[RMDB]
RNA sequence: GGGAACGACUCGAGUAGAGUCGAAAAUUUGGGAAAACGUAGCAGAAGUAUUUGAUGUAGAUGUAGCUUACCUGUUGAAUGUAUCAAUUUUCAGACGUCAAGCGGACGUGCAACAACAGUUGUUAGAUUAUGAAGACCGACUUGAUAGCGUUGAUGACUAACACACCGUGUUCGCACGGUGUGUUAGAAAAGAAACAACAACAACAAC
Reactivity to DMS in 0.01 (KOAc 150mM, MgCl2 10mM, bicine 150mM(pH8.5), 24C), signal-to-noise 1, nucleotides 027 to 156: u010u000u000g000g020g010a050a010a080a080c130g010u010a100g010c030a070g030a040a130g020u000a040u000u000u000g060a060u000g010u000a080g040a090u000g000u000a060g010c010u000u010a050c050c000u000g020u000u000g010a180a070u000g000u000a060u000c100a060a130u010u000u000u010c040a100g010a080c030g000u000c030a020a050g020c050g000g000a100c010g010u000g010c050a040a040c060a070a050c090a110g000u000u000g000u000u010a130g010a150u000u000a080u010g000a080a080g030a080c090c020g010a040c030u020u000g000a080u000a090g030c080g010u000u000g020a120u000g010a240
Reactivity to 2A3 in 0.01 (KOAc 150mM, MgCl2 10mM, bicine 150mM(pH8.5), 24C), signal-to-noise 3, nucleotides 027 to 156: u030u040u080g040g000g030a050a020a030a040c110g040u030a030g030c060a030g000a080a040g070u060a080u130u140u070g080a090u080g030u020a070g030a060u030g010u080a040g000c020u010u050a070c000c030u030g060u060u050g050a110a090u020g000u070a080u060c030a040a020u020u080u070u030c030a050g000a080c040g000u030c000a000a050g030c000g050g000a040c060g040u040g030c020a030a020c000a040a020c020a030g000u000u000g020u030u050a050g030a210u070u090a070u280g110a060a000g040a010c010c010g060a140c040u020u040g000a020u050a040g060c030g040u010u000g050a160u010g020a060